Structure probing data (2A3 and DMS) for a 207-nucleotide construct. Reactivities are given for positions 27 through 156. The 2A3 profile rests on 4,721 reads. The RNA was probed in 150 mM KOAc, 10 mM MgCl2 and 150 mM bicine (pH 8.5) at 24 C. For 2A3 the reverse transcriptase was SuperScript II with manganese.
[RMDB]
RNA sequence: GGGAACGACUCGAGUAGAGUCGAAAAGGCGAUAUGGUCGGUUCGGUCGUUGAGUACAAGAUCGAAAUGGCGGUUGACGGUGCGAGUUAUCAAACCUACUUGACCGACAAAAUCGACGGGAAAAACACGACUGGCGGUUACGAUCGCAGCAUCCGCGCUUUCACGGUUAAUUCGUUAACCGUGAAAGAAAAGAAACAACAACAACAAC
Reactivity to 2A3 in 0.01 (KOAc 150mM, MgCl2 10mM, bicine 150mM(pH8.5), 24C), signal-to-noise 5, nucleotides 027 to 156: g110g000c010g000a000u010a030u100g090g010u040c070g030g060u190u190c030g020g010u020c020g020u080u180g040a040g020u060a290c010a040a080g020a300u000c000g000a010a030a050u030g020g000c020g010g010u010u010g040a040c050g010g010u020g000c040g000a050g040u160u110a170u190c020a000a020a020c010c010u060a100c040u060u080g000a000c000c000g000a010c010a000a080a010a080u010c010g000a010c000g000g010g010a010a080a010a020a020c040a010c030g010a010c010u020g050g000c020g000g040u030u060a050c160g010a010u000c010g000c010a010g030c010a020u020c020c030g030c020g010
Reactivity to DMS in 0.01 (KOAc 150mM, MgCl2 10mM, bicine 150mM(pH8.5), 24C), signal-to-noise 2, nucleotides 027 to 156: g020g020c000g000a140u000a020u000g000g050u020c050g020g060u000u000c020g040g000u000c010g040u000u010g030a170g010u020a200c090a060a110g020a140u000c000g020a030a080a300u000g000g000c020g020g030u000u000g000a040c050g020g020u000g040c300g000a170g030u020u030a080u000c090a000a300a080c030c030u010a080c100u010u010g000a070c040c000g040a040c020a060a060a070a220u000c010g030a010c040g000g010g000a060a090a070a100a100c100a070c080g020a080c000u000g000g020c010g050g010u000u010a050c080g010a040u000c010g080c030a170g000c060a100u020c050c010g020c100g000